Chemical mapping of a 177-nucleotide RNA with 2A3 and DMS. Source: RMDB library OK2TRN, as collected in RNAgym. For 2A3, 7,909 sequencing reads were counted. Conditions: 150 mM KOAc, 10 mM MgCl2 and 150 mM bicine (pH 8.5), 24 C. For DMS the reverse transcriptase was MarathonRT.

RNA sequence: GGGAACGACUCGAGUAGAGUCGAAAAUGCCUUUCAGGAAAGGUGCUGACGUGGGCCACUGCCGCUUCGCUGGGAAGCAAUGGGCCCAGCUAGGCCCGGGGCGCGGCCACACCCCUGUGGGGGAGGGGCUAACAUGCAGAUUCGUCUGCAUGUUAGCAAAAGAAACAACAACAACAAC
Reactivity to 2A3 in 0.01 (KOAc 150mM, MgCl2 10mM, bicine 150mM(pH8.5), 24C), signal-to-noise 5, nucleotides 027 to 126: u100g020c000c010u040u080u090c090a070g050g090a150a080a020g030g010u050g060c090u050g020a040c050g080u080g010g110g030c000c030a220c120u070g040c040c080g000c010u040u030c030g070c140u170g110g150g020a030a020g020c040a040a100u100g030g030g000c030c000c000a000g000c000u020a010g010g030c010c030c030g000g020g000g000c030g000c030g010g010c010c000a010c010a010c000c020c000c010u030g040u170g050g000g000g000g000a030g010g020g050
Reactivity to DMS in 0.01 (KOAc 150mM, MgCl2 10mM, bicine 150mM(pH8.5), 24C), signal-to-noise 6, nucleotides 027 to 126: u010g000c010c010u010u010u010c080a120g000g000a080a090a080g000g010u000g010c100u010g000a110c140g020u010g010g020g020c010c010a080c050u010g020c140c130g010c020u000u000c070g000c150u010g000g010g010a060a030g000c050a100a060u000g010g010g010c000c000c020a020g010c060u000a120g010g000c010c050c020g000g000g010g030c040g020c070g010g020c020c050a060c050a070c030c010c010c020u000g010u010g020g010g000g000g010a070g000g000g010